[RMDB]
An RNA of 177 nucleotides, treated with 2A3 and DMS and read out base by base. The RNA was probed in 150 mM KOAc, 10 mM MgCl2 and 150 mM bicine (pH 8.5) at 24 C.
RNA sequence: GGGAACGACUCGAGUAGAGUCGAAAAAAAAGCUAUUAAUGUUUUGAGAGGAUUCAGGAAAGAGAUUGGAAGGAUGCUGAACGUCUUGAAUAGGAGACGCAGAUCUGCAGGCAUGAUCAUUAUGCUGUACUGGAUUAUUAUUCGUAAUAAUCCAGUAAAAAGAAACAACAACAACAAC
Reactivity to 2A3 in 0.01 (KOAc 150mM, MgCl2 10mM, bicine 150mM(pH8.5), 24C), signal-to-noise 6, nucleotides 027 to 126: a000a010a010a010g090c150u150a160u230u110a190a080u120g020u040u090u090u090g070a090g000a010g030g030a030u080u080c040a020g050g050a060a060a010g060a030g000a020u030u090g040g030a040a020g030g000a030u070g090c020u020g030a130a040c020g020u000c000u020u080g080a160a120u130a230g110g060a030g000a000c020g020c020a010g010a040u010c030u060g000c040a030g040g030c020a010u020g010a030u120c020a010u040u150a030u080g020c020u040g020
Reactivity to DMS in 0.01 (KOAc 150mM, MgCl2 10mM, bicine 150mM(pH8.5), 24C), signal-to-noise 9, nucleotides 027 to 126: a060a040a050a060g010c030u010a160u010u000a090a070u010g000u000u000u000u000g000a120g010a070g010g010a080u000u000c060a060g010g010a050a050a060g000a050g010a090u000u000g010g010a100a080g000g000a040u000g010c030u000g010a100a090c040g010u000c010u000u000g010a080a090u010a120g010g000a030g010a020c030g010c050a030g000a050u000c040u000g010c100a080g000g010c030a020u000g010a060u010c110a070u010u000a040u000g010c040u000g010
DMS adducts were read by reverse transcription with MarathonRT. Values cover nucleotides 27 to 126. For DMS, 20,816 sequencing reads were counted. The 2A3 profile rests on 7,245 reads.